[RMDB]
RNA sequence: GGGAACGACUCGAGUAGAGUCGAAAACGGCAUCUGCUUCGGGCCCUGCCAGCACGGCACCGCUGAACCUUCUGAGGUGCAGCAAGCCACCGUGGAGGGUGCAGGGGAAGCCGCUGAAUCAGAGCGCCUGUGGGAAACGAUUCGUCGUUUCCCACAGAAAAGAAACAACAACAACAAC
Reactivity to 2A3 in 0.01 (KOAc 150mM, MgCl2 10mM, bicine 150mM(pH8.5), 24C), signal-to-noise 2, nucleotides 027 to 126: c030g000g000c030a160u000c010u030g000c000u040u060c000g050g000g040c000c000c020u000g000c040c010a060g050c080a050c050g010g000c040a020c030c080g120c030u010g030a010a020c010c000u140u010c120u240g200a060g020g000u040g010c010a030g120c020a010a080g060c050c040a050c000c000g110u190g030g090a150g050g060g060u140g010c000a000g000g000g020g040a050a060g040c010c010g000c080u060g030a040a020u050c020a020g010a020g080c090g020c010
Reactivity to DMS in 0.01 (KOAc 150mM, MgCl2 10mM, bicine 150mM(pH8.5), 24C), signal-to-noise 2, nucleotides 027 to 126: c110g010g000c000a100u000c030u000g000c080u000u000c030g000g010g030c000c010c000u010g010c070c070a190g010c050a030c080g010g020c070a140c150c110g000c000u010g010a050a030c020c000u000u000c170u010g010a060g030g040u000g010c030a080g010c080a060a060g030c200c090a060c050c010g020u010g000g000a080g030g020g010u000g020c030a010g000g010g030g000a110a090g020c060c070g000c060u020g000a050a050u000c010a030g010a060g010c130g010c030
Chemical mapping of a 177-nucleotide RNA with 2A3 and DMS. 2A3 adducts were read by reverse transcription with SuperScript II with manganese. The data come from the RNA Mapping Database (RMDB), library OK2TRN. The reactions ran in a buffer of 150 mM KOAc, 10 mM MgCl2 and 150 mM bicine (pH 8.5), at 24 C. As a SHAPE reagent, 2A3 marks flexible, mostly unpaired nucleotides at the ribose 2'-OH.